This 307-nucleotide RNA was probed chemically with 2A3 and DMS. For 2A3, 12,772 sequencing reads were counted. Source: RMDB library POS240, as collected in RNAgym. 2A3 adducts were read by reverse transcription with SuperScript II with manganese. Values cover nucleotides 27 to 266. Reactivities are rounded to 0.1 and cut off at 0 and 3.

RNA sequence: GGGAACGACUCGAGUAGAGUCGAAAACGAUCACUUCGGUGAUCGACAGCUCGUUCGCGAGCUGAAGAACUGCUUCGGCAGUUCACCUGCUCUUCGGAGCAGGAGGGCUUCGUUAGGUGAGGCUCCUGUAUGGAGAUACGCUGCUGCCCAAAAAUGUCCAAAGACGCCAAUGGGUCAACAGAAAUCAUCGACAUAAGGUGAUUUUUAAUGCAGCUGGAUGCUUGUCCUAUGCCAUACAGUGCUAAAGCUCUACGAUUGAAGCCCAUAAGGCAGCAUUCGUGCUGCCUAAAAGAAACAACAACAACAAC
Reactivity to 2A3 in 0.01 (KOAc 150mM, MgCl2 10mM, bicine 150mM(pH8.5), 24C), signal-to-noise 5, nucleotides 027 to 266: c010g000a000u010c000a010c010u050u120c250g090g000u010g000a000u010c000g010a000c000a000g000c000u010c010g050u100u090c210g010c010g110a000g010c000u010g010a030a030g000a000a000c010u010g010c040u100u110c210g140g010c000a000g000u000u000c000a020c000c000u000g010c000u000c010u040u090c280g130g000a000g000c000a000g010g010a130g000g000g000c000u000u000c000g000u000u000a010g010g010u060g030a010g000g000c010u000c000c000u010g000u000a010u000g010g010a000g000a020u150a240c000g000c000u000g000c000u000g000c000c010c000a000a000a000a000a000u000g000u000c000c000a010a000a000g000a000c000g000c010c000a010a040u000g000g000g000u000c000a000a000c000a000g000a000a000a000u000c000a000u000c000g000a000c010a030u010a000a000g000g000u000g000a000u010u010u000u000u010a060a030u300g000c000a000g000c000u000g000g000a020u050g150c300u300u300g010u010c000c000u000a000u020g000c000c000a000u010a000c000a000g000u000g000c000u000a000a000a010g000c000u000c000u000a000c000g000a000u010u010g000a000a000g000c000c000c000a010u020a010
Reactivity to DMS in 0.01 (KOAc 150mM, MgCl2 10mM, bicine 150mM(pH8.5), 24C), signal-to-noise 5, nucleotides 027 to 266: c020g010a010u000c010a000c000u000u030c180g020g020u000g000a000u000c000g010a260c010a000g000c000u000c000g020u010u020c190g020c010g000a000g000c000u000g000a160a110g010a010a010c000u010g010c000u010u030c190g030g010c000a010g000u000u000c010a110c010c000u000g000c010u000c000u000u020c170g020g000a020g000c000a000g000g010a120g000g000g000c010u000u000c000g010u010u010a300g000g000u000g000a020g000g000c000u000c300c010u000g000u000a010u000g000g000a000g000a030u000a010c150g000c010u000g000c000u000g000c000c000c000a000a020a090a180a080u000g010u000c000c000a010a020a030g000a010c000g010c010c020a060a190u000g000g000g010u000c300a000a030c300a010g000a000a010a000u000c010a000u000c000g000a160c050a020u000a020a030g000g020u000g000a010u000u010u000u000u000a010a020u020g000c000a010g010c000u000g000g000a010u000g010c250u030u020g000u000c010c000u010a060u010g000c010c000a020u000a010c010a010g020u010g000c010u000a020a020a300g000c000u000c000u000a010c000g010a060u020u000g000a010a010g010c010c000c000a040u010a060